[RMDB]
Source: RMDB library OK3TST, as collected in RNAgym. This 207-nucleotide RNA was probed chemically with 2A3 and DMS. The 2A3 profile rests on 821 reads. DMS (dimethyl sulfate) methylates the pairing face of unpaired adenines and cytosines. For DMS, 1,299 sequencing reads were counted. DMS adducts were read by reverse transcription with MarathonRT.
RNA sequence: GGGAACGACUCGAGUAGAGUCGAAAACAAACGAAAUUGGAGUUCCAGAGAGUGAAGUUGAACAGUCAACUAACAAUAGAGGUGAUCCACGUCUUGUUAUCCGAUGUAAACCUGAUUACGAUAUUGACGUGUCCACACUACGUAACGAGGUUAAAAAACUAAUCGGAACGUUCGCGUUCCGAUUAGUAAAAGAAACAACAACAACAAC
Reactivity to 2A3 in 0.01 (KOAc 150mM, MgCl2 10mM, bicine 150mM(pH8.5), 24C), signal-to-noise 2, nucleotides 027 to 156: c050a010a030a000c060g030a050a000a240u080u130g050g000a090g080u260u180c050c040a120g000a010g000a010g050u070g090a080a010g030u000u040g040a080a070c060a060g110u100c010a020a000c040u050a030a060c020a050a030u090a110g130a050g090g000u060g000a000u010c000c050a000c010g000u000c010u080u040g010u060u040a040u020c000c060g030a090u090g130u300a030a060a100c050c030u060g030a160u080u010a020c000g020a030u030a080u130u240g050a040c000g000u000g030u090c050c000a100c000a020c040u110a050c040g010u000a090a000c030g000a000g000g200u100u100a060a010a000a190a000
Reactivity to DMS in 0.01 (KOAc 150mM, MgCl2 10mM, bicine 150mM(pH8.5), 24C), signal-to-noise 1, nucleotides 027 to 156: c080a080a050a230c080g000a060a080a180u000u050g000g000a110g000u000u000c020c030a170g000a080g000a110g060u000g000a020a160g030u000u030g020a020a090c160a210g090u010c020a030a030c020u000a120a110c010a130a100u000a100g000a260g000g010u000g000a130u000c010c050a090c170g010u000c020u010u000g020u000u000a150u000c000c060g040a130u000g000u000a060a040a050c010c020u000g030a030u010u000a030c060g010a130u000a060u000u000g000a010c050g000u000g040u000c030c020a100c090a020c100u010a030c020g040u000a020a030c060g000a050g000g030u000u010a000a100a050a150a110